[RMDB]
RNA sequence: GGGAACGACUCGAGUAGAGUCGAAAAAAAUUAGCCAGGCAUGGCAGCAUGCGCCUGUAGUCCCAGCUACUUGGAAGGCUGAGGCACAAGAAUCACUUCAAUCCGAGAGGCAGAGGUUGCAGUGAGCUCACCUAAAGAGGUUCGCCUCUUUAGGUGAAAAAGAAACAACAACAACAAC
Reactivity to DMS in 0.01 (KOAc 150mM, MgCl2 10mM, bicine 150mM(pH8.5), 24C), signal-to-noise 4, nucleotides 027 to 126: a040a020a080u010u000a090g000c020c010a100g010g010c080a070u000g010g000c200a080g010c060a020u000g010c070g010c010c010u000g010u000a050g010u000c020c000c010a120g030c030u000a040c080u010u000g010g010a110a110g010g020c020u000g010a050g010g010c050a030c110a070a050g000a090a080u000c040a030c030u010u000c040a050a030u000c020c040g010a120g000a170g000g010c060a050g020a080g010g000u000u010g010c060a030g000u000g000a070g010c140
Reactivity to 2A3 in 0.01 (KOAc 150mM, MgCl2 10mM, bicine 150mM(pH8.5), 24C), signal-to-noise 2, nucleotides 027 to 126: a000a000a000u120u050a050g000c020c000a050g110g000c030a020u030g040g000c000a010g040c000a020u030g020c030g010c020c010u040g030u050a010g040u010c000c000c000a000g020c000u050a060c020u040u130g180g030a160a070g010g000c010u020g010a040g030g070c060a010c010a070a060g090a130a090u020c000a010c030u040u000c010a020a080u020c010c030g150a110g000a070g160g130c070a020g060a070g070g030u030u040g020c000a000g010u000g010a020g040c000

This 177-nucleotide RNA was probed chemically with DMS and 2A3. For DMS the reverse transcriptase was MarathonRT. For 2A3 the reverse transcriptase was SuperScript II with manganese. Source: RMDB library OK2TRN, as collected in RNAgym. The RNA was probed in 150 mM KOAc, 10 mM MgCl2 and 150 mM bicine (pH 8.5) at 24 C.